[RMDB]
RNA sequence: GGGAACGACUCGAGUAGAGUCGAAAACGGAUUAGGCGUGGAGGCGAAAGUCACCCUCCUCGCAUCGCAAGUUCGUGCUUACGACUUACACGUAGGGCGAGGGGUGGGCGAAAGUUGCCAUGAGACCAAAAUAUGUAGUUCUUCGGAACUACAUAAAUGUAGUCCAAUAAUUCGUUAUUGGACUACAAAAAGAAACAACAACAACAAC
Reactivity to 2A3 in 0.01 (KOAc 150mM, MgCl2 10mM, bicine 150mM(pH8.5), 24C), signal-to-noise 6, nucleotides 027 to 156: c020g050g030a090u110u120a110g030g020c030g000u030g000g030a040g020g020c090g060a150a050a010g040u060c040a090c030c000c000u050c000c000u000c000g000c010a020u080c020g000c040a010a050g020u150u080c020g010u070g100c030u120u220a010c020g020a020c020u040u080a030c090a020c100g070u090a150g020g110g030c030g010a030g000g000g030g040u180g010g020g000c030g010a090a050a030g040u060u040g020c010c010a010u060g040a040g050a070c020c020a030a110a030a010u070a010u020g000u000a000g000u000u000c000u020u030c130g080g000a000a000c000u000a000c000a000u000a010a030a000
Reactivity to DMS in 0.01 (KOAc 150mM, MgCl2 10mM, bicine 150mM(pH8.5), 24C), signal-to-noise 3, nucleotides 027 to 156: c050g010g010a130u000u000a050g020g020c030g020u010g000g000a100g010g000c030g010a070a080a170g010u000c030a070c060c010c000u000c000c020u000c020g010c040a070u010c020g030c040a060a070g000u010u010c090g030u010g020c100u000u000a050c000g030a110c040u000u000a070c060a080c070g000u000a080g010g000g020c040g010a010g000g010g000g030u000g020g010g020c010g010a040a110a170g010u000u000g000c010c030a130u010g010a150g010a130c030c030a060a080a090a190u000a020u000g010u000a020g000u000u000c000u010u000c290g020g010a000a000c000u000a000c000a000u000a000a050a140